[RMDB]
RNA sequence: GGGAACGACUCGAGUAGAGUCGAAAAGUGCGUAGGUAUUGGAACUGUAGGCAAAUCCGCAGAUCUAGCUGAAACAUGAGUGAUAACCGCGUCUUCGGACAAGGGAAGUUGCCUAAUCAUGCUCCCAUUGCGAUAUAUUGUUCGCAAUAUAUCGCAAAAAAGAAACAACAACAACAAC
Reactivity to DMS in 0.01 (KOAc 150mM, MgCl2 10mM, bicine 150mM(pH8.5), 24C), signal-to-noise 8, nucleotides 027 to 126: g010u000g000c010g010u000a220g000g010u000a060u030u020g000g010a050a050c020u010g010u010a070g020g010c230a080a130a150u040c010c010g000c030a020g000a060u000c010u000a080g000c010u000g000a100a090a050c040a020u000g000a060g010u000g010a050u020a070a300c060c050g000c300g000u000c010u000u030c090g010g010a030c070a060a300g010g000g000a030a070g000u000u000g010c020c050u000a050a060u020c050a040u010g000c100u000c000c000c010a130
Reactivity to 2A3 in 0.01 (KOAc 150mM, MgCl2 10mM, bicine 150mM(pH8.5), 24C), signal-to-noise 5, nucleotides 027 to 126: g010u020g010c020g020u020a020g020g000u070a190u170u110g030g000a040a040c010u020g040u090a190g030g040c080a060a050a060u140c020c010g000c000a000g000a020u000c010u010a010g010c020u010g030a040a030a010c020a030u080g030a030g060u040g030a030u030a090a040c000c000g020c020g010u000c000u000u060c130g090g010a040c030a040a030g070g040g000a060a090g080u100u130g010c000c020u050a050a050u070c030a020u110g030c030u010c000c000c000a010
Structure probing data (DMS and 2A3) for a 177-nucleotide construct. The reactions ran in a buffer of 150 mM KOAc, 10 mM MgCl2 and 150 mM bicine (pH 8.5), at 24 C. The data come from the RNA Mapping Database (RMDB), libraries RFM100 and RFMREP.